[RMDB]
RNA sequence: GGGAACGACUCGAGUAGAGUCGAAAAGAUAUGGAAGGUGGAGCAAUGAUGGUUUCUACCCACCUCGGAAACGAGAGGAAACUUGAGCUCACACCUUCCUAAGUCAAAAGUGCACUUCGGUGCACAAGCCAAAAUAGAUCUUCGGAUCUAUUUUGGCAAAAGAAACAACAACAACAAC
Reactivity to 2A3 in 0.01 (KOAc 150mM, MgCl2 10mM, bicine 150mM(pH8.5), 24C), signal-to-noise 2, nucleotides 027 to 126: g000a010u030a010u030g000g010a000a030g030g020u010g010g000a010g040c020a210a300u090g020a000u030g060g000u010u010u020c010u080a130c040c170c060a210c070c040u000c000g000g000a000a000a000c020g020a000g000a020g070g070a000a000a010c000u050u020g010a000g000c010u000c000a300c010a000c070c000u010u010c000c000u000a000a020g000u000c000a000a040a060a100g000u000g000c000a000c010u080u150c300g110g000u020g000c010a000c010a000a010
Reactivity to DMS in 0.01 (KOAc 150mM, MgCl2 10mM, bicine 150mM(pH8.5), 24C), signal-to-noise 2, nucleotides 027 to 126: g000a050u000a130u000g000g000a050a000g020g030u010g010g010a020g020c010a300a090u000g010a050u000g010g000u000u000u000c000u010a170c250c130c140a180c150c040u000c010g000g000a050a000a080c010g000a040g000a220g020g000a000a000a000c000u000u010g000a010g010c020u000c000a160c010a010c000c000u010u010c020c000u000a000a050g000u000c010a050a060a210a180g000u000g040c000a020c000u000u020c120g070g010u000g000c000a000c000a010a040